Structure probing data (2A3 and DMS) for a 177-nucleotide construct. Values cover nucleotides 27 to 126. 2A3 adducts were read by reverse transcription with SuperScript II with manganese. DMS adducts were read by reverse transcription with MarathonRT.
RNA sequence: GGGAACGACUCGAGUAGAGUCGAAAAGAAAACAAGUACCGAGAACAUUGUUUUCGCUGCUUGGCGUUGCCGUUUUGUGUUGCAGUUGGUUGGGUAACGCCGCAAAUACCAACAGGACAGACAGAUAACUGCUAAAUUACUUCGGUAAUUUAGCAGUAAAAGAAACAACAACAACAAC
Reactivity to 2A3 in 0.01 (KOAc 150mM, MgCl2 10mM, bicine 150mM(pH8.5), 24C), signal-to-noise 3, nucleotides 027 to 126: g050a000a000a000a000c000a020a010g040u080a040c010c080g040a040g060a120a020c100a200u200u290g000u010u010u000u010c010g000c030u030g010c010u050u180g010g000c010g060u000u030g010c000c000g040u080u060u120u100g160u030g010u040u040g020c030a060g000u090u080g030g020u040u100g090g000g000u020a050a000c010g000c000c020g020c000a020a030a000u160a030c000c010a000a020c000a010g030g080a020c010a060g080a000c000a020g070a070u120a210
Reactivity to DMS in 0.01 (KOAc 150mM, MgCl2 10mM, bicine 150mM(pH8.5), 24C), signal-to-noise 2, nucleotides 027 to 126: g000a060a050a060a080c020a010a010g030u000a040c260c010g030a020g000a050a040c010a200u030u030g000u000u000u010u000c010g020c160u010g000c010u000u010g010g000c040g000u000u010g000c030c040g000u000u020u030u030g000u000g000u010u000g000c100a140g000u000u010g010g000u010u010g010g000g000u000a100a070c260g000c000c000g000c110a060a010a090u030a070c010c000a010a000c030a100g050g020a090c110a080g010a080c100a070g010a090u020a050